[RMDB]
RNA sequence: GGGAACGACUCGAGUAGAGUCGAAAACAGGAAUCUACAGUUCAUGUAGUGCAGUCAGGCACUGUCACAGUCCACUUCAGUACCGCCAGCCCGCAAGCCAAUUUCGUCAUUUCGCUGUGCGGUAAGAAUGCACCCACAGAUUCGUCUGUGGGUGCAUAAAAGAAACAACAACAACAAC
Reactivity to 2A3 in 0.01 (KOAc 150mM, MgCl2 10mM, bicine 150mM(pH8.5), 24C), signal-to-noise 2, nucleotides 027 to 126: c020a000g070g050a020a060u040c010u030a070c030a050g060u090u210c090a070u100g020u030a010g030u030g010c000a000g050u040c020a010g090g090c050a000c010u040g000u040c070a000c000a080g000u030c030c020a040c050u070u080c120a030g070u050a020c000c010g040c030c010a000g000c030c020c000g070c050a050a000g050c020c100a120a080u060u120u250c110g060u040c090a090u070u130u050c000g040c020u010g150u230g080c000g000g010u000a010a000g020a000
Reactivity to DMS in 0.01 (KOAc 150mM, MgCl2 10mM, bicine 150mM(pH8.5), 24C), signal-to-noise 2, nucleotides 027 to 126: c050a090g000g000a050a070u010c050u000a070c060a050g000u020u020c220a080u020g020u010a030g020u000g020c020a040g020u000c100a120g010g030c100a130c070u000g020u020c060a080c070a060g000u000c020c010a100c170u030u020c110a070g010u000a040c060c010g020c030c030a010g010c060c110c100g000c120a080a080g000c080c070a080a120u000u030u010c160g010u000c130a080u000u000u000c100g000c010u000g020u010g030c000g010g000u010a030a020g010a080

The record gives the reactivity of an RNA of 177 nucleotides to 2A3 and DMS. In probing experiments dimethyl sulfate is read out at A N1 and C N3, which are open when not base-paired. It was measured as part of the RMDB library OK2TST. Conditions: 150 mM KOAc, 10 mM MgCl2 and 150 mM bicine (pH 8.5), 24 C. Values are in units of 0.01, from 0 to 300, in steps of 10.